RNA sequence: GGGAACGACUCGAGUAGAGUCGAAAAUGCUUCGUGCACAUUGCACACUUACCACCGAAAACUGCCCCAACGGCCCCCUACUGCCCAAAACAGGAUCACCAUAACUUAGCAUCCCCUGAGCAGGGGAACCCGAAGUUGACUUCGGUCAACUUCGGGUAAAAGAAACAACAACAACAAC
Reactivity to 2A3 in 0.01 (KOAc 150mM, MgCl2 10mM, bicine 150mM(pH8.5), 24C), signal-to-noise 1, nucleotides 027 to 126: u050g010c000u050u080c100g010u040g030c060a000c060a190u150u160g000c030a010c000a010c020u060u000a000c000c070a040c000c000g060a000a000a000a060c020u030g030c000c000c000c000a110a000c060g040g010c050c000c000c000c000u040a060c010u050g010c000c010c000a060a060a000a000c050a040g060g100a080u060c000a090c040c000a010u090a090a170c030u060u080a010g010c020a170u090c070c000c000c000u060g030a030g090c170a040g000g000g000g000a000